[RMDB]
RNA sequence: GGGAACGACUCGAGUAGAGUCGAAAAGCAUACAACUUCGGUUGUAUGCAACGACAGAGUUGACUGUCAAAAACAACGUAACAUGUGAGUUACAAUAACACAUUGCAGCAGCUUUCGAGCUGCUGAAACGGACAUGACUGUUCGCAGUCAUGUCCGUAAAAGAAACAACAACAACAAC
Reactivity to 2A3 in 0.01 (KOAc 150mM, MgCl2 10mM, bicine 150mM(pH8.5), 24C), signal-to-noise 1, nucleotides 027 to 126: g000c010a000u000a010c000a000a000c030u010u030c160g090g010u040u000g010u020a000u010g000c010a000a040c090g010a000c020a000g070a010g050u050u040g080a190c000u000g010u000c010a070a030a050a000a010c060a010a010c040g070u060a020a010c030a040u070g130u090g160a140g020u070u070a020c030a040a030u210a160a010c090a000c010a130u120u300g050c000a000g010c000a000g000c000u110u120u180c220g210a020g000c000u000g000c020u000g000a010a010
Reactivity to DMS in 0.01 (KOAc 150mM, MgCl2 10mM, bicine 150mM(pH8.5), 24C), signal-to-noise 1, nucleotides 027 to 126: g010c010a000u000a000c000a000a000c000u000u020c130g010g020u000u000g010u000a010u000g010c010a000a040c220g000a000c000a020g000a160g000u010u000g010a140c000u020g030u010c090a010a060a040a060a030c090a070a040c070g010u000a040a070c150a080u000g000u000g020a180g030u000u000a050c080a020a020u030a110a080c120a030c140a040u040u000g010c040a000g000c010a010g010c000u010u000u000c210g000a040g000c000u000g000c000u000g000a000a040